RNA sequence: GGGAACGACUCGAGUAGAGUCGAAAAGUUUGCAGUUCGCUGCAAACAAAAAGCGUACUACAUGGUGGUACGCAAGGAGCGCGUCCCAAAUAGGACGCCUUCUGAUGACCGUACGUAACAUCCAUGUAUCGCAAAAAGCACAUCUUCGGAUGUGCAACAUAGUUGACCUCUUCGGAGGUCAACUAUGAAAAGAAACAACAACAACAAC
Reactivity to 2A3 in 0.01 (KOAc 150mM, MgCl2 10mM, bicine 150mM(pH8.5), 24C), signal-to-noise 3, nucleotides 027 to 156: g010u010u010u000g000c010a010g020u070u160c140g110c100u030g000c000a020a000a000c020a040a060a040a020a010g060c070g040u150a120c040u000a000c050a010u000g000g000u000g010g000u000a000c000g000c030a000a030g000g000a020g010c190g000c000g070u010c020c010c000a110a260a160u300a050g010g000a000c010g000c000c010u010u000c000u000g270a210u110g020a040c130c000g000u020a000c000g020u030a040a040c030a280u060c020c000a000u010g010u030a020u300c010g030c050a110a000a000a020a000g010c000a000c000a000u020c000u060u110c250g080g000a000u000g000u000g000c000a000a000
Reactivity to DMS in 0.01 (KOAc 150mM, MgCl2 10mM, bicine 150mM(pH8.5), 24C), signal-to-noise 2, nucleotides 027 to 156: g000u000u000u020g020c010a010g050u000u010c300g080c000u000g000c000a030a000a030c020a030a040a030a060a140g000c010g010u000a090c140u000a050c020a020u010g000g030u000g020g020u000a000c030g000c020a050a010g030g000a020g030c140g020c010g000u010c000c000c010a100a140a300u000a060g020g010a020c000g030c020c000u000u000c000u010g000a110u000g040a120c280c040g000u000a020c010g000u000a050a030c070a150u000c000c010a080u000g000u000a020u000c030g050c040a080a050a090a080a110g010c010a020c000a030u000c000u010u010c300g100g000a050u010g000u010g010c010a010a050
Chemical mapping of a 207-nucleotide RNA with 2A3 and DMS. Values cover nucleotides 27 to 156. The 2A3 profile rests on 2,238 reads. For 2A3 the reverse transcriptase was SuperScript II with manganese.